RNA sequence: GGGAACGACUCGAGUAGAGUCGAAAAGCAUAUCCUCUUGUAGUCACUCCUCUUGUUUCAGCAGGCAUAUUUGGUGUAAAACCAGCUGUGUCUUUUGAUUAUCUUAUUAGGGAGGCUAAGACUAGAGUAAUCCCACGGUUCGCCGUGGGAAAAAGAAACAACAACAACAAC
Reactivity to DMS in 0.01 (KOAc 150mM, MgCl2 10mM, bicine 150mM(pH8.5), 24C), signal-to-noise 3, nucleotides 027 to 129: g050c100a240u030a150u080c070c030u010c100u030u010g040u000a000g020u010c050a000c030u000c030c020u060c150u030u020g050u010u030u000c010a000g020c070a000g020g040c020a030u010a010u000u000u000g030g040u020g010u110a030a030a060a000c020c010a000g050c030u010g010u040g010u000c000u030u040u000u000g020a080u000u070a070u050c200u000u070a110u050u010a090g040g050g000a020g090g000c160u050a140a080g010a050c030u010a050g000a030g000u010a130a110